[RMDB]
RNA sequence: GGGAACGACUCGAGUAGAGUCGAAAAUGGGAAUCUGAACUCGAUCCCGCCGUACCCGCGCAACAACGGCGCCGGUUGCGUAUCGGUGGUGUGGAUGGCGUCGUACUCUGGUCAGCGUGCGACUGCAGGGUGAUAAAAUCUUCGGAUUUUAUCACCCAAAAGAAACAACAACAACAAC
Reactivity to DMS in 0.01 (KOAc 150mM, MgCl2 10mM, bicine 150mM(pH8.5), 24C), signal-to-noise 2, nucleotides 027 to 126: u010g010g000g020a090a050u010c050u000g010a140a120c090u010c030g000a060u000c020c000c020g000c010c010g000u010a060c030c020c150g010c020g030c040a050a020c060a040a090c080g000g000c010g040c040c030g000g000u000u000g010c030g020u000a050u000c140g010g010u000g000g020u010g030u010g010g000a070u020g030g010c040g020u000c020g000u000a020c020u000c030u000g010g020u000c110a060g020c100g000u000g020c020g000a030c010u000g020c080a090
Reactivity to 2A3 in 0.01 (KOAc 150mM, MgCl2 10mM, bicine 150mM(pH8.5), 24C), signal-to-noise 2, nucleotides 027 to 126: u140g020g000g020a080a120u100c050u090g050a120a100c040u000c090g020a030u020c010c010c000g000c020c000g000u050a060c000c010c010g000c010g030c010a020a050c020a030a080c050g070g040c030g000c000c030g000g020u000u020g040c000g020u030a090u220c020g000g000u040g000g060u060g040u110g060g050a070u090g070g020c020g000u000c000g020u000a010c030u000c000u110g190g100u190c060a010g000c010g000u000g020c000g000a030c040u090g020c060a110